An RNA of 207 nucleotides, treated with 2A3 and read out base by base.
The RNA was probed in 150 mM KOAc, 10 mM MgCl2 and 150 mM bicine (pH 8.5) at 24 C.

[RMDB]
RNA sequence: GGGAACGACUCGAGUAGAGUCGAAAAUCCAAUUGGUACGCUGACAAAGAUGGUCCUUCCGUCAAGUUCACGUACUGAAGCCUUAGCCGCCUCGCAAGACGACUCGCCGCGACUUCCUCUUAUCGAGAGGUAAACAAGGAGCGAGUUUAAAGGCUAGCAUAAUCCUUCGCUUCGGCGAAGGAUUAUGAAAAGAAACAACAACAACAAC
Reactivity to 2A3 in 0.01 (KOAc 150mM, MgCl2 10mM, bicine 150mM(pH8.5), 24C), signal-to-noise 1, nucleotides 027 to 156: u040c000c000a000a120u180u030g010g000u070a000c000g020c140u000g010a000c030a050a180a160g060a060u070g060g020u160c020c140u180u060c020c000g010u000c020a060a030g050u090u030c000a000c000g000u000a000c000u000g030a040a000g000c000c050u020u120a040g000c050c050g100c020c020u090c010g000c190a210a000g090a050c000g010a060c000u000c050g010c000c000g040c030g060a040c010u080u050c000c010u000c000u210u090a250u140c140g010a010g000a000g010g010u000a130a090a040c070a090a050g030g020a140g040c000g010a000g010u020u020u000a080a130a000g030g000c000u020a000g000

It was measured as part of the RMDB library RSTRND.
For 2A3 the reverse transcriptase was SuperScript II with manganese.
For 2A3, 462 sequencing reads were counted.
Values cover nucleotides 27 to 156.